[RMDB]
RNA sequence: GGGAACGACUCGAGUAGAGUCGAAAAAAGAUAUGGACGUUAGGGAGAGAGUGUGUCACGAUGAAACAUCUCGGAAACGAGAUGUGGAGUGACAUAAACUCUCAUCGAUCUAACGUCCUAAGUCAAAGAUGACCCACUUCUUCGGAAGUGGGUCAUCAAAAGAAACAACAACAACAAC
Reactivity to DMS in 0.01 (KOAc 150mM, MgCl2 10mM, bicine 150mM(pH8.5), 24C), signal-to-noise 1, nucleotides 027 to 126: a040a010g020a080u000a300u010g000g010a040c000g030u000u000a030g000g000g000a030g020a000g000a010g010u000g000u010g000u000c020a000c030g000a200u020g040a130a100a020c040a000u000c030u000c000g000g020a170a060a180c000g000a010g000a000u000g000u000g000g000a020g000u010g000a000c000a000u010a050a150a100c000u000c000u020c000a130u010c210g000a030u040c000u000a000a050c000g020u000c000c000u000a000a080g000u000c030a090a100a070